[RMDB]
RNA sequence: GGGAACGACUCGAGUAGAGUCGAAAAGAUAUGGAGGGCUCUUUGAUCUAUACGUAACAUCGGUCGGAAACGACCGUGGUAUAGGGAGAGUUUCCUAAGUCAAAAGCUUUCUGUUCGCAGAAAGCAACAAAUGCAUAUACUUCGGUAUAUGCAUUUGAAAAGAAACAACAACAACAAC
Reactivity to DMS in 0.01 (KOAc 150mM, MgCl2 10mM, bicine 150mM(pH8.5), 24C), signal-to-noise 8, nucleotides 027 to 126: g000a040u000a290u010g010g010a040g000g010g010c000u000c000u000u000u010g010a090u010c000u000a010u000a000c010g010u000a040a090c170a030u010c000g000g000u000c000g010g000a100a110a220c010g020a010c000c000g040u000g010g000u000a000u000a010g010g000g000a010g000a030g010u000u010u000c000c000u000a070a200g010u000c060a080a080a130a140g000c000u000u000u000c000u000g010u000u010c200g010c010a010g000a010a010a010g010c000a040a060